[RMDB]
RNA sequence: GGGAACGACUCGAGUAGAGUCGAAAAAAUCAACUCUUCAUCAGUAAUCACAUUGCCAGUCGGGUUGGUGGGCCGUGAGACGCAAAUCAGGCCUAUAUCAUCGGUAAUAUUGAGGUGUUCAAAAUCGGACCGAUGGGUGAUUCGUCACCCAUCGGUCAAAAGAAACAACAACAACAAC
Reactivity to DMS in 0.01 (KOAc 150mM, MgCl2 10mM, bicine 150mM(pH8.5), 24C), signal-to-noise 1, nucleotides 027 to 126: a120a060u000c030a120a090c030u000c050u000u000c050a070u040c070a050g020u000a030a130u010c120a010c020a300u010u000g000c000c100a000g020u000c010g010g020g010u010u000g010g060u000g010g030g000c020c000g000u040g000a060g000a170c240g040c220a100a060a100u010c040a240g010g000c010c020u000a070u010a030u010c060a060u020c050g000g010u000a080a100u000a150u000u000g030a040g000g020u000g000u000u000c090a050a010a070a190u000c230g000

The record gives the reactivity of an RNA of 177 nucleotides to DMS. Values cover nucleotides 27 to 126. The reactions ran in a buffer of 150 mM KOAc, 10 mM MgCl2 and 150 mM bicine (pH 8.5), at 24 C. For DMS, 562 sequencing reads were counted.